[RMDB]
RNA sequence: GGGAACGACUCGAGUAGAGUCGAAAAGAAAGAUUUCUAUCCAGAGAGGUGGAGUGACUGGCCCUAUGAAACCUCGGCAACAUUAUUGUGCCAAUUCCAGCAAGCGCUAGCUUGAAAGAUAGGAAAAAACAGGUUGCGCGCUUCGGCGCGCAACCAAGUUAGGGAUUAGGUUCGCCUAAUCCCUAACAAAAGAAACAACAACAACAAC
Reactivity to 2A3 in 0.01 (KOAc 150mM, MgCl2 10mM, bicine 150mM(pH8.5), 24C), signal-to-noise 1, nucleotides 027 to 156: g000a020a070a020g100a000u060u090u010c030u100a160u010c060c060a060g060a000g010a000g230g010u050g010g100a080g000u040g050a000c010u040g000g060c010c040c000u180a140u040g100a070a110a140c030c030u070c060g000g000c000a010a000c000a140u120u230a130u120u300g000u050g000c000c000a000a050u100u150c030c030a000g020c000a010a030g000c040g000c080u120a100g000c000u040u010g010a090a060a040g030a000u080a100g030g000a130a000a000a000a000a000c000a010g000g060u000u000g050c040g030c050g070c020u030u140c240g080g020c000g140c010g090c000a020a020c000c000a000a000